RNA sequence: GGGAACGACUCGAGUAGAGUCGAAAAGAUGAGACGCAGGCGCGAGUGACGUCGAUCGAGCAGUUGAAGGCAAGUUUUGACGAUCAGAUUAGCGCAAGCAAUAGCGAAUUGCGUGAAGUUAUAGCGACUGAGACUGGAGCGCUAUCGCGUGAAAUUGGGUACCUGGAUAGUUCGCUAUCCAGGUACCAAAAGAAACAACAACAACAAC
Reactivity to 2A3 in 0.01 (KOAc 150mM, MgCl2 10mM, bicine 150mM(pH8.5), 24C), signal-to-noise 2, nucleotides 027 to 156: g050a090u190g070a020g030a020c000g000c000a030g060g000c000g040c010g050a040g030u000g020a000c000g000u000c000g010a010u030c020g020a020g040c070a110g060u100u090g030a070a010g100g000c020a000a080g030u000u010u140u160g080a040c070g010a080u110c070a030g050a100u110u090a010g000c000g040c010a000a000g030c030a060a090u050a060g050c010g060a010a130u030u030g000c030g000u010g010a040a020g040u050u060a160u070a090g020c060g090a110c060u080g010a040g000a130c060u080g020g110a050g020c000g000c000u010a040u080c020g000c020g030u050g010a050a080a060u130u160g090